Structure probing data (DMS) for a 177-nucleotide construct. Source: RMDB library TTRINS, as collected in RNAgym. Reactivities are given for positions 27 through 126. Values are in units of 0.01, from 0 to 300, in steps of 10.
RNA sequence: GGGAACGACUCGAGUAGAGUCGAAAAGAUAUGGAGCUUAGGGAGUGGUGCAUUUAUGACCCAGGCGUUUCUCGGAAACGAGAGACGCCUGCAUAAAUGCACCACGACGAUCUAAGCUCCUAAGUCACAAUAUCAGCUUGUUCGCAAGCUGAUAUUGAAAAGAAACAACAACAACAAC
Reactivity to DMS in 0.01 (KOAc 150mM, MgCl2 10mM, bicine 150mM(pH8.5), 24C), signal-to-noise 2, nucleotides 027 to 126: g010a050u010a300u010g020g000a010g020c000u010u000a000g000g010g000a030g050u000g000g000u010g000c010a000u010u010u000a000u000g000a220c300c300c110a000g020g030c000g010u010u000u000c020u020c000g010g000a110a090a240c000g000a050g000a020g020a000c000g050c000c000u010g000c000a000u000a010a010a030u010g030c010a000c020c000a000c020g000a050c240g000a020u000c000u000a020a010g020c000u000c000c000u000a020a040g000u000c050a240